This 177-nucleotide RNA was probed chemically with 2A3 and DMS. The RNA was probed in 150 mM KOAc, 10 mM MgCl2 and 150 mM bicine (pH 8.5) at 24 C. The 2A3 profile rests on 10,995 reads. It was measured as part of the RMDB library TTRDEL. Reactivities are given for positions 27 through 126.
[RMDB]
RNA sequence: GGGAACGACUCGAGUAGAGUCGAAAAGAUAUGGAAGAUCGCCACACAGCAACAGCUCGGAAACGAGACAUGCUGGUGGUCGAUCUUCCUAAGUCAAAACUACUUAAGCCUUCGGGCUUAAGUAGAACAUUAAAGAAGCGUUCGCGCUUCUUUAAUGAAAAGAAACAACAACAACAAC
Reactivity to 2A3 in 0.01 (KOAc 150mM, MgCl2 10mM, bicine 150mM(pH8.5), 24C), signal-to-noise 3, nucleotides 027 to 126: g010a010u070a030u120g000g000a000a010g010a010u010c000g000c000c000a030c000a000c000a020g020c000a010a110c020a190g050c000u010c010g030g020a060a070a050c010g010a010g070a070c040a050u070g000c000u010g000g000u000g010g000u010c000g000a000u010c000u000u010c000c000u000a000a000g000u000c010a000a000a090a120c000u000a000c000u000u010a000a000g000c000c010u060u120c300g070g000g000c000u010u000a000a000g000u000a010g010a010a010
Reactivity to DMS in 0.01 (KOAc 150mM, MgCl2 10mM, bicine 150mM(pH8.5), 24C), signal-to-noise 7, nucleotides 027 to 126: g000a040u010a300u010g000g010a020a010g020a000u000c000g000c020c000a000c000a130c010a000g000c000a020a080c300a140g010c010u000c000g010g010a100a110a210c010g000a010g000a050c080a160u000g020c010u000g000g010u000g000g010u010c020g000a000u000c000u000u000c000c000u000a000a060g010u000c030a050a070a090a170c000u000a000c000u000u000a000a000g000c000c000u000u020c220g030g010g010c000u000u000a000a010g010u000a000g000a060a150